[RMDB]
RNA sequence: GGGAACGACUCGAGUAGAGUCGAAAAGAUAUGGACCUAGUAGACAUGUGUGUCGGAAACGAUUUUGACACAACAGCUACAGGUCCUAAGUCAAACUUAACAUGGAAGUUCGCUUCCAUGUUAAGAAGAUCUAGCUAAGCUUCGGCUUAGCUAGAUCAAAAGAAACAACAACAACAAC
Reactivity to 2A3 in 0.01 (KOAc 150mM, MgCl2 10mM, bicine 150mM(pH8.5), 24C), signal-to-noise 2, nucleotides 027 to 126: g020a020u090a050u160g020g000a010c000c010u020a130g050u020a010g080a200c300a300u100g010u000g000u010g000u030c040g020g050a060a110a040c250g030a070u030u000u050u070g010a000c000a000c000a170a130c010a020g000c000u010a010c000a010g000g000u000c000c000u020a040a000g020u010c000a010a010a040c010u000u010a000a010c000a010u000g000g020a010a020g020u030u100c210g070c120u000u000c000c000a000u010g000u000u000a000a000g000a000a020
Reactivity to DMS in 0.01 (KOAc 150mM, MgCl2 10mM, bicine 150mM(pH8.5), 24C), signal-to-noise 2, nucleotides 027 to 126: g000a030u010a300u000g000g000a000c000c000u000a100g040u010a020g000a040c050a080u000g000u000g010u000g000u000c000g010g020a000a090a150c300g040a230u000u000u010u000g000a000c000a020c010a020a030c000a240g000c010u000a000c000a070g000g000u000c000c000u010a000a050g000u000c030a110a080a210c010u000u010a000a000c000a000u000g010g000a020a020g020u010u000c230g010c000u000u000c000c000a000u000g010u000u010a000a000g000a110a040